[RMDB]
This 207-nucleotide RNA was probed chemically with DMS and 2A3. Conditions: 150 mM KOAc, 10 mM MgCl2 and 150 mM bicine (pH 8.5), 24 C. For 2A3 the reverse transcriptase was SuperScript II with manganese. The data come from the RNA Mapping Database (RMDB), library OK3TST.
RNA sequence: GGGAACGACUCGAGUAGAGUCGAAAAAUGCAGUCAUGUGUUAUUUAAUGACAGGGAUACAUUCUGAGAAACGCAUAACUGAGUAAUUGUGUCAUUAUUAUGGGACCAUGAUAAAGUGUACUUACACAAACCUAGAUUGUGUGUGUGUGUGUGUGUAGAUCAGGUAUGGUUUCGACCAUACCUGAUCAAAAGAAACAACAACAACAAC
Reactivity to DMS in 0.01 (KOAc 150mM, MgCl2 10mM, bicine 150mM(pH8.5), 24C), signal-to-noise 1, nucleotides 027 to 156: a090u000g030c030a120g000u000c010a040u020g010u000g030u000u000a130u010u000u000a050a050u010g010a070c030a080g000g000g000a160u000a060c030a140u010u010c010u020g010a200g040a030a080a090c050g030c040a060u000a070a150c070u010g020a090g040u000a070a070u010u000g010u000g020u010c000a150u000u010a020u000u000a100u020g000g000g000a080c060c020a040u020g000a090u000a040a050a110g000u000g040u000a090c090u010u010a020c030a030c010a010a070a070c000c010u030a090g030a180u040u000g040u000g000u000g030u000g040u000g040u020g000u020g000u000g030u000g020u000a130
Reactivity to 2A3 in 0.01 (KOAc 150mM, MgCl2 10mM, bicine 150mM(pH8.5), 24C), signal-to-noise 3, nucleotides 027 to 156: a010u090g030c020a010g020u030c000a000u030g120u000g030u090u150a100u080u140u090a100a050u110g020a020c010a010g100g000g000a050u040a110c070a080u100u050c080u120g040a020g170a080a050a010c060g040c170a090u070a200a020c030u030g000a000g070u050a030a090u120u040g080u010g040u070c020a000u000u070a020u090u040a020u040g110g030g010a040c030c040a040u000g000a010u070a070a080a020g040u020g010u060a090c010u110u120a020c040a000c010a040a050a030c010c030u080a080g000a260u120u040g010u030g000u000g030u000g000u020g020u000g000u010g000u000g000u000g020u010a050